Chemical mapping of a 177-nucleotide RNA with DMS and 2A3.
RNA sequence: GGGAACGACUCGAGUAGAGUCGAAAAUUAUUGAGCGUAGAUGUCUCUGUCACGAUACGAGUAAGUGACUCUCGUGAACUACUGGCGAAUGAGACAGAGACAUUAUAUGCUCGUGCCAGUCAAUAAAUAUCUUAUGCGUUUUCGAACGCAUAAGAUAAAAAGAAACAACAACAACAAC
Reactivity to DMS in 0.01 (KOAc 150mM, MgCl2 10mM, bicine 150mM(pH8.5), 24C), signal-to-noise 4, nucleotides 027 to 126: u010u010a060u010u010g010a020g020c010g080u000a020g000a010u000g000u000c010u010c000u000g010u000c010a110c070g000a150u000a070c020g000a040g010u000a040a090g000u010g010a130c130u000c170u000c170g000u000g010a090a020c040u000a030c040u000g020g000c030g000a130a050u000g010a090g000a020c010a000g000a020g010a010c000a000u000u000a050u000a030u000g010c010u010c000g010u000g010c030c030a170g010u000c140a080a080u010a060a070a140
Reactivity to 2A3 in 0.01 (KOAc 150mM, MgCl2 10mM, bicine 150mM(pH8.5), 24C), signal-to-noise 2, nucleotides 027 to 126: u090u050a000u050u170g000a000g030c000g000u010a030g010a030u020g020u000c000u010c020u000g050u010c010a020c130g050a030u050a150c010g000a030g010u060a150a110g000u030g150a060c020u000c000u010c020g150u130g040a040a000c010u080a040c020u070g240g000c060g070a120a080u140g010a070g000a060c010a000g020a010g020a000c000a010u000u000a030u000a000u010g010c000u010c010g020u010g000c050c000a080g080u160c080a020a130u080a160a150a000